[RMDB]
RNA sequence: GGGAACGACUCGAGUAGAGUCGAAAAGAAUGUCAGCGUACUUUCCUACGACAGUAUUGGAGAUAGCAAACACUGAAGGCUAUCUUAGAUGUUCAGGUAGCGUCUUACGCUGACCUUCAGUGUGGCGGAUCAACUUGUUAUUCGUAAUAGGUUGAUCAAAAGAAACAACAACAACAAC
Reactivity to DMS in 0.01 (KOAc 150mM, MgCl2 10mM, bicine 150mM(pH8.5), 24C), signal-to-noise 9, nucleotides 027 to 126: g010a060a060u010g000u000c000a010g010c010g010u000a020c190u000u010u010c040c020u010a060c110g010a160c200a070g000u020a050u010u010g010g020a010g000a020u000a020g000c020a090a080a080c100a090c140u020g010a070a050g000g010c000u000a010u000c000u000u010a080g010a020u000g010u010u010c130a120g010g010u020a020g010c100g010u000c050u000u000a010c010g010c010u000g000a020c000c030u000u000c000a040g010u010g010u010g010g010c140g010
Reactivity to 2A3 in 0.01 (KOAc 150mM, MgCl2 10mM, bicine 150mM(pH8.5), 24C), signal-to-noise 9, nucleotides 027 to 126: g070a040a040u070g000u010c000a000g000c000g010u010a030c060u030u040u050c020c010u030a060c050g160a050c060a030g080u110a090u080u140g080g010a020g000a010u020a010g010c030a040a120a060c060a050c130u130g050a080a020g070g000c000u000a000u000c000u000u010a030g010a030u040g050u120u080c090a080g120g150u100a010g030c030g070u010c010u020u010a010c010g000c000u000g000a020c000c000u000u010c000a050g010u040g030u050g110g090c080g050